[RMDB]
RNA sequence: GGGAACGACUCGAGUAGAGUCGAAAAGAUAUGGAGAGCCGAGGAUCUUUCCUGCAAUAUGGAACUCUAUGAUAUCGGAAACGAUAUAUAGUUGCCAUAUUGCAGGAAAGGGAGGCUCUCCUAAGUCCUUACGUACAUCGUUCGCGAUGUACGUAAGAAAAGAAACAACAACAACAAC
Reactivity to 2A3 in 0.01 (KOAc 150mM, MgCl2 10mM, bicine 150mM(pH8.5), 24C), signal-to-noise 2, nucleotides 027 to 126: g030a020u170a020u230g010g000a000g000a010g040c010c060g100a300g040g000a040u000c000u020u000u000c010c030u000g000c010a000a000u000a010u000g000g040a150a200c020u050c030u080a080u260g300a020u080a010u020c000g030g000a010a070a110c030g000a000u000a030u020a000u000a030g130u170u080g250c000c010a010u000a000u000u020g000c000a000g000g000a000a000a000g010g020g000a010g000g000c000u000c000u000c000c000u000a010a000g000u020c000
Reactivity to DMS in 0.01 (KOAc 150mM, MgCl2 10mM, bicine 150mM(pH8.5), 24C), signal-to-noise 2, nucleotides 027 to 126: g020a170u000a300u010g000g010a000g010a020g020c020c020g000a120g020g000a040u000c000u000u000u000c000c010u020g000c000a000a010u000a010u010g000g000a090a090c200u010c190u010a020u030g010a040u000a000u000c000g000g000a170a120a240c000g000a010u000a010u000a020u000a010g000u000u010g000c010c000a000u000a000u000u000g000c000a000g010g010a000a000a000g000g000g000a040g050g010c000u000c000u000c000c000u000a000a080g000u000c040